[RMDB]
RNA sequence: GGGAACGACUCGAGUAGAGUCGAAAAGAUAUGGAGGGACGGGAGGUCUAUAAUCCAGCGGUCGGAAACGACCGUCUGGGUAGACUCGUCCCUCCUAAGUCAAAAUCGGCUGUGUUCGCACAGCCGACAAUCGCUUACUCUUCGGAGUAAGCGAUUGAAAAGAAACAACAACAACAAC
Reactivity to DMS in 0.01 (KOAc 150mM, MgCl2 10mM, bicine 150mM(pH8.5), 24C), signal-to-noise 2, nucleotides 027 to 126: g010a040u000a100u010g010g010a030g010g030g000a000c010g000g020g030a220g040g010u000c040u020a290u010a240a040u000c000c000a020g020c000g020g010u000c000g000g000a030a040a050c010g000a020c000c000g030u000c000u010g010g020g000u000a010g000a040c010u000c000g030u010c000c000c000u000c000c000u000a000a060g010u000c010a130a070a090a300u000c000g020g000c000u000g030u000g010u010u020c270g000c010a000c010a010g000c010c000g000a010
The record gives the reactivity of an RNA of 177 nucleotides to DMS.
Conditions: 150 mM KOAc, 10 mM MgCl2 and 150 mM bicine (pH 8.5), 24 C.